[RMDB]
RNA sequence: GGGAACGACUCGAGUAGAGUCGAAAAUGUGACAUGUUCGCAUGUCACAAGCCAGGUAGUUCCUAUGUCAAUUACCUGUACAGGCCAUGGUCUGGAUAGGAAAGCUCUACCUAUUCGUAGGUAGAAAUUUACUUAUUAGCUUCGGCUAAUAAGUAAAAAAAGAAACAACAACAACAAC
Reactivity to DMS in 0.01 (KOAc 150mM, MgCl2 10mM, bicine 150mM(pH8.5), 24C), signal-to-noise 7, nucleotides 027 to 126: u000g010u000g000a000c000a000u000g010u000u020c240g030c000a000u000g000u000c000a000c000a020a080g010c090c040a120g010g010u000a090g010u000u000c020c020u000a090u010g000u010c160a090a100u010u010a070c010c000u000g010u000a030c020a020g010g000c010c050a090u010g050g010u000c010u000g000g000a030u000a010g010g000a100a090a120g010c180u000c000u000a010c000c000u000a020u010u010c140g010u000a010g000g000u000a010g000a010a040a070
Reactivity to 2A3 in 0.01 (KOAc 150mM, MgCl2 10mM, bicine 150mM(pH8.5), 24C), signal-to-noise 4, nucleotides 027 to 126: u050g000u010g010a010c000a010u000g010u040u100c290g000c110a000u000g010u010c000a000c010a000a010g040c010c030a060g090g030u070a030g020u030u030c010c020u070a120u160g190u090c060a130a120u110u040a160c000c000u010g010u000a020c000a010g030g000c030c030a130u300g050g010u020c000u010g000g000a020u020a030g030g000a080a050a000g030c020u000c000u020a000c000c000u010a030u030u060c210g040u020a000g000g010u000a000g000a010a010a010

This 177-nucleotide RNA was probed chemically with DMS and 2A3.
The RNA was probed in 150 mM KOAc, 10 mM MgCl2 and 150 mM bicine (pH 8.5) at 24 C.
For DMS, 11,778 sequencing reads were counted.
It was measured as part of the RMDB library M2PK50.
For 2A3 the reverse transcriptase was SuperScript II with manganese.